Conditions: 150 mM KOAc, 10 mM MgCl2 and 150 mM bicine (pH 8.5), 24 C. Structure probing data (DMS and 2A3) for a 207-nucleotide construct.
[RMDB]
RNA sequence: GGGAACGACUCGAGUAGAGUCGAAAAUAGAGUAGAAGCCCACACAUGCUUCCCAUGCCAGAAUGGGGUGGAACUGGAACGACAAGAUGCAGUCUUCACCCCCAUUCCUUUAGACCCAAGAUGGGAUCUCCUUCAAUCCUGGCUGGAAAGUGGGAUACCACGUAUGAUGAUUCGUCAUCAUACGUGGAAAAGAAACAACAACAACAAC
Reactivity to DMS in 0.01 (KOAc 150mM, MgCl2 10mM, bicine 150mM(pH8.5), 24C), signal-to-noise 2, nucleotides 027 to 156: u020a110g010a160g040u000a140g020a110a150g010c030c010c010a090c110a150c120a130u010g000c050u000u000c010c010c010a050u040g020c000c030a070g000a060a040u000g000g010g000g030u000g000g010a050a060c020u000g020g010a090a070c090g030a300c160a070a240g000a150u020g000c020a120g020u000c030u010u000c010a080c010c000c000c010c000a040u000u000c000c000u000u000u000a050g010a070c010c000c000a080a250g000a250u010g030g040g000a040u010c020u000c070c040u010u000c090a060a100u020c010c020u000g000g000c000u000g000g000a030a060a030g020u030g000g040g010a120u000a120
Reactivity to 2A3 in 0.01 (KOAc 150mM, MgCl2 10mM, bicine 150mM(pH8.5), 24C), signal-to-noise 4, nucleotides 027 to 156: u080a000g120a030g040u150a050g070a280a040g060c000c050c000a010c000a000c000a020u110g020c030u050u000c020c000c010a060u180g020c010c000a030g000a080a040u060g000g020g000g000u010g000g000a000a000c010u020g010g130a100a060c050g130a070c130a160a030g070a160u210g110c000a000g000u000c200u020u010c010a020c010c020c020c020c000a010u010u020c000c000u060u110u050a060g020a050c020c000c040a120a050g050a210u190g000g020g020a050u010c030u050c040c010u170u070c050a050a050u020c010c000u000g000g000c000u020g030g030a040a010a010g030u030g000g000g000a000u070a020
DMS (dimethyl sulfate) methylates the pairing face of unpaired adenines and cytosines. For DMS the reverse transcriptase was MarathonRT.